[RMDB]
RNA sequence: GGGAACGACUCGAGUAGAGUCGAAAAGAUAUGGAGCUGUUUGAGGUACGCAGCGAAGAACUCGGAAACGAGGGAGCUGGCGUACUGAGGCUCCUAAGUCAAAUCAUGUUGGUUCGCCAACAUGAAAUCGUGUCAAAUGGUUCGCCAUUUGACACGAAAAAGAAACAACAACAACAAC
Reactivity to 2A3 in 0.01 (KOAc 150mM, MgCl2 10mM, bicine 150mM(pH8.5), 24C), signal-to-noise 1, nucleotides 027 to 126: g040a010u070a030u200g020g000a020g040c020u030g050u150u280u300g170a030g030g000u000a000c010g010c000a010g010c000g200a080a030g000a040a040c000u010c100g000g060a050a070a050c010g000a000g000g040g000a020g000c010u050g300g210c020g010u000a000c000u000g010a010g000g020c000u000c000c000u040a090a020g000u000c000a030a000a130u030c030a010u020g020u000u010g050g010u000u050c230g030c110c010a000a000c000a000u000g000a000a000a000
Reactivity to DMS in 0.01 (KOAc 150mM, MgCl2 10mM, bicine 150mM(pH8.5), 24C), signal-to-noise 2, nucleotides 027 to 126: g000a020u000a300u000g000g010a000g000c000u000g010u010u010u000g000a140g000g010u000a030c010g000c040a020g020c000g020a070a120g000a170a190c000u000c080g010g060a170a080a150c020g000a040g030g000g010a130g000c000u000g030g060c000g000u000a000c030u000g000a050g000g010c000u000c000c000u000a030a040g010u000c070a080a120a170u000c000a010u010g000u000u000g010g000u000u000c260g020c000c000a000a010c000a000u000g000a010a070a090

Structure probing data (2A3 and DMS) for a 177-nucleotide construct. 2A3 adducts were read by reverse transcription with SuperScript II with manganese. The reactions ran in a buffer of 150 mM KOAc, 10 mM MgCl2 and 150 mM bicine (pH 8.5), at 24 C.